RNA sequence: GGGAACGACUCGAGUAGAGUCGAAAAAGGGCAACCAGGCCUCCAUAGGGUCCCUGUGGAAGCAAUGAAUCUCUGUCCUCCUUGGUCCUGGGUUUAUGCGUGCAUUUCCAAAGGGAGAUGCAUGCAUAAUCUGUCCGGUGAACCCGCCAGGCCCGGAACUGAUACAGGGUUUCGACCCUGUAUCAGUAAAAGAAACAACAACAACAAC
Reactivity to 2A3 in 0.01 (KOAc 150mM, MgCl2 10mM, bicine 150mM(pH8.5), 24C), signal-to-noise 1, nucleotides 027 to 156: a000g060g000g000c040a030a050c040c030a050g060g020c010c020u000c000c000a020u020a000g220g100g070u190c130c000c020u000g010u000g020g010a000a000g000c050a010a200u140g030a090a120u080c070u060c030u140g030u030c010c010u050c030c000u050u110g000g000u040c020c010u020g020g020g000u010u000u000a000u000g000c000g010u000g000c030a020u010u010u000c020c040a200a300a050g300g000g000a040g000a000u000g000c000a000u000g010c000a000u000a000a000u000c030u070g100u130c050c000g010g010u080g050a070a090c000c030c000g020c000c010a020g010g000c020c000c000g030g000a080
Structure probing data (2A3) for a 207-nucleotide construct. Reactivities are rounded to 0.1 and cut off at 0 and 3. The RNA was probed in 150 mM KOAc, 10 mM MgCl2 and 150 mM bicine (pH 8.5) at 24 C. The data come from the RNA Mapping Database (RMDB), library ARCHII.